[RMDB]
RNA sequence: GGGAACGACUCGAGUAGAGUCGAAAACUUGGGACACUCGACCCGACGUCCUUGACAAGCAGCAGACACUGCGUACAUCCUUCCGUGCCUAUUUUCUAGAGUUAUCGAAACCAGCAUACCUGUGUGAGUAAUCCUUUCGAUCCUAUCCAGCUUGCGGUGGAUUAAAUUAGUUCGCUAAUUUAAUCCAAAAAGAAACAACAACAACAAC
Reactivity to 2A3 in 0.01 (KOAc 150mM, MgCl2 10mM, bicine 150mM(pH8.5), 24C), signal-to-noise 6, nucleotides 027 to 156: c030u080u100g010g000g010a010c010a040c060u060c050g090a100c030c020c010g030a030c030g010u000c020c000u030u100g040a060c060a110a040g000c020a010g000c020a010g050a070c020a010c080u030g000c020g020u030a030c010a090u070c010c010u080u050c030c030g040u030g030c010c010u070a090u090u100u050u050c040u040a050g010a030g090u110u060a080u120c050g030a050a030a050c020c010a010g030c010a040u090a150c010c020u060g010u010g010u020g090a020g020u070a040a090u040c020c000u040u090u070c030g030a030u020c000c000u060a070u070c040c020a010g070c040u090u080g030c050g110g040
Reactivity to DMS in 0.01 (KOAc 150mM, MgCl2 10mM, bicine 150mM(pH8.5), 24C), signal-to-noise 4, nucleotides 027 to 156: c080u010u000g020g010g010a130c030a070c040u000c060g010a140c030c010c020g030a080c040g010u010c030c010u000u000g020a120c090a100a150g010c030a070g030c040a150g010a150c110a120c030u000g020c030g030u000a080c060a110u000c010c020u000u000c030c040g020u000g010c010c010u000a110u000u000u010u000c070u000a100g010a120g020u000u000a100u000c050g010a070a070a080c050c020a090g000c020a090u000a050c050c010u000g030u000g020u010g010a140g010u000a090a110u010c010c020u000u000u000c030g010a040u000c040c010u000a060u000c030c010a110g010c040u000u010g040c050g020g020
The record gives the reactivity of an RNA of 207 nucleotides to 2A3 and DMS. DMS adducts were read by reverse transcription with MarathonRT.